[RMDB]
Overview: Structure probing data (DMS and 2A3) for a 177-nucleotide construct. Conditions: 150 mM KOAc, 10 mM MgCl2 and 150 mM bicine (pH 8.5), 24 C. 2A3 adducts were read by reverse transcription with SuperScript II with manganese. The data come from the RNA Mapping Database (RMDB), library OK2TRN.
RNA sequence: GGGAACGACUCGAGUAGAGUCGAAAAAAUUCACGCCGGCGCUGACCGGUCCACACGCGCGGCUCGGCGGUGCCGCGGUCGGCGAGUCGGCCACCGAGGAGCCGAUGCCGGAUGCCAGCAACAUGUGGCCUGUUACGUAUUUCGAUACGUAACAGGCAAAAGAAACAACAACAACAAC
Reactivity to DMS in 0.01 (KOAc 150mM, MgCl2 10mM, bicine 150mM(pH8.5), 24C), signal-to-noise 2, nucleotides 027 to 126: a030a100u000u000c080a120c200g010c020c020g020g020c060g020c180u000g030a100c010c010g000g000u020c030c010a040c070a050c190g000c240g000c090g030g000c020u000c000g010g000c050g000g000u020g030c030c030g010c040g000g010u000c060g040g010c010g000a180g020u020c120g020g010c000c020a040c040c020g000a080g010g000a300g020c000c050g000a040u000g020c040c000g030g000a030u010g000c020c020a080g000c050a030a120c160a090u000g000u030g000
Reactivity to 2A3 in 0.01 (KOAc 150mM, MgCl2 10mM, bicine 150mM(pH8.5), 24C), signal-to-noise 1, nucleotides 027 to 126: a000a010u170u020c080a040c030g050c080c030g000g010c020g040c130u060g080a300c010c000g020g000u010c000c000a120c050a080c110g070c010g020c040g030g020c020u040c040g090g000c000g050g000u050g020c020c000g040c000g040g000u040c020g050g040c020g000a070g130u040c010g080g000c000c010a060c030c020g070a060g040g000a010g120c040c020g030a060u130g010c000c000g070g000a060u160g060c040c040a020g030c040a040a060c010a140u120g030u130g170